[RMDB]
RNA sequence: GGGAACGACUCGAGUAGAGUCGAAAAGUGGACAGGGGGGUUCCCGCUCUCACCGAACGGGGCCUGUCCGAAAACAGGCCGCGUGACAAGGCGCGGCCGUGGUUGUCGCUCGGGGGUGAUCGCCGAAAUUAAUUGUUCUGUUCGCAGAACAAUUAAUAAAAGAAACAACAACAACAAC
Reactivity to DMS in 0.01 (KOAc 150mM, MgCl2 10mM, bicine 150mM(pH8.5), 24C), signal-to-noise 8, nucleotides 027 to 126: g030u020g000g000a020c020a030g000g000g020g010g010g020u030u030c000c000c000g020c040u000c010u010c230a120c210c160g000a040a040c030g010g010g000g020c000c000u010g000u000c010c010g010a050a060a080a080c110a100g020g020c000c010g010c010g020u000g010a160c240a160a140g010g010c000g010c000g000g000c010c000g010u000g010g010u000u000g000u000c050g010c050u000c030g000g000g000g000g010u010g010a080u010c070g010c030c030g000a060a090
Reactivity to 2A3 in 0.01 (KOAc 150mM, MgCl2 10mM, bicine 150mM(pH8.5), 24C), signal-to-noise 4, nucleotides 027 to 126: g160u130g000g000a010c010a020g000g030g000g020g030g020u110u180c010c010c000g000c010u000c010u010c000a220c070c130g020a160a060c020g010g010g020g050c000c010u000g000u000c000c020g000a060a030a000a010c060a010g000g020c000c010g000c010g030u030g060a140c080a160a060g130g000c000g000c000g000g020c010c000g000u010g010g000u020u040g030u010c020g030c060u020c030g000g000g010g000g060u090g060a080u090c080g030c060c010g020a080a060